Chemical mapping of a 207-nucleotide RNA with 2A3 and DMS. The reactions ran in a buffer of 150 mM KOAc, 10 mM MgCl2 and 150 mM bicine (pH 8.5), at 24 C. For 2A3, 4,708 sequencing reads were counted. The data come from the RNA Mapping Database (RMDB), library OK3TST.
RNA sequence: GGGAACGACUCGAGUAGAGUCGAAAAUCACACACGAGUUCGUGUACACUCACUCACUCGAGUGUUCGAGAGAGAACUCGAUCACACGUGAACACGAACACGUGAGUGAACGUACGUGAACACACGAACGUGAGAGUGAGUACGAUCUCGAUCACACCGAGUAGAGACCAUUCGUGGUCUCUACUCGAAAAGAAACAACAACAACAAC
Reactivity to 2A3 in 0.01 (KOAc 150mM, MgCl2 10mM, bicine 150mM(pH8.5), 24C), signal-to-noise 5, nucleotides 027 to 156: u050c020a020c000a000c000a010c050g040a030g060u040u020c000g000u030g040u100a030c040a020c040u020c000a030c000u010c000a030c000u030c020g040a030g000u000g020u000u000c020g000a010g000a010g020a010g060a220a100c000u000c010g000a020u010c010a020c010a010c070g050u020g080a100a020c020a010c050g070a150a020c030a000c040g010u020g010a040g040u040g040a040a020c030g040u090a020c030g000u010g040a130a000c040a020c010a000c090g050a100a010c040g010u030g010a060g000a010g010u030g000a010g010u010a000c010g040a080u010c020u000c060g060a100u130c080a040c020a020c160
Reactivity to DMS in 0.01 (KOAc 150mM, MgCl2 10mM, bicine 150mM(pH8.5), 24C), signal-to-noise 1, nucleotides 027 to 156: u010c050a000c010a090c000a140c060g020a080g010u000u000c000g000u000g050u000a100c010a060c020u000c060a040c000u000c000a170c080u010c030g000a060g040u020g010u000u000c040g010a090g000a250g000a170g030a100a130c000u000c020g000a110u000c020a110c010a150c060g020u000g000a080a030c060a060c060g000a060a100c060a070c010g000u020g000a100g030u000g000a020a010c060g000u010a040c010g100u000g010a120a070c180a080c020a090c040g040a140a020c070g010u000g000a110g020a040g040u020g010a050g030u010a030c070g020a160u000c020u000c000g000a090u010c060a060c020a170c050